[RMDB]
RNA sequence: GGGAACGACUCGAGUAGAGUCGAAAAUGUAUUUAUUUAUAGCCUCCUAUGUGGCCACAAAAGUUUGGUCAUUGUUCCCACUUGAAGGUAGGGUAUCAUUGCAACUAACUUUUGUGAGGUUUGUAUUGAUACCUAGAAGGCUCUAAGUAGGUGGCUACCGACUAUGACUAUUCGUAGUCAUAGUCGGAAAAGAAACAACAACAACAAC
Reactivity to 2A3 in 0.01 (KOAc 150mM, MgCl2 10mM, bicine 150mM(pH8.5), 24C), signal-to-noise 2, nucleotides 027 to 156: u060g040u060a210u070u240u050a160u050u140u030a140u160a010g000c000c000u030c000c000u040a010u070g050u060g050g010c020c030a010c030a070a300a060a070g000u130u130u030g030g000u020c010a050u010u100g010u000u000c000c000c000a030c030u020u050g120a150a070g120g070u100a120g020g030g000u040a000u020c000a010u000u110g000c050a010a030c020u080a030a070c040u080u090u280u300g060u050g030a170g010g030u080u070u060g020u040a040u040u060g030a000u010a030c000c000u000a060g010a070a030g060g010c000u000c060u100a090a100g000u010a010g000g020u020g000g000c000u010a010
Reactivity to DMS in 0.01 (KOAc 150mM, MgCl2 10mM, bicine 150mM(pH8.5), 24C), signal-to-noise 1, nucleotides 027 to 156: u000g010u010a010u000u000u010a020u020u000u010a170u000a120g030c000c030u000c000c010u000a060u010g000u000g010g000c000c020a100c070a060a080a090a080g000u010u000u000g030g050u000c010a050u000u000g000u000u000c010c000c000a110c090u020u010g020a070a050g000g010u000a140g020g010g020u000a010u000c000a010u010u000g030c020a010a010c020u000a090a070c020u000u000u000u010g030u000g000a090g000g010u000u000u000g040u000a070u000u000g020a050u000a020c010c010u000a060g000a200a140g010g010c010u000c060u000a030a070g020u000a050g010g000u000g010g000c020u000a070
An RNA of 207 nucleotides, treated with 2A3 and DMS and read out base by base. The 2A3 profile rests on 986 reads. Conditions: 150 mM KOAc, 10 mM MgCl2 and 150 mM bicine (pH 8.5), 24 C. The DMS profile rests on 2,919 reads. For DMS the reverse transcriptase was MarathonRT.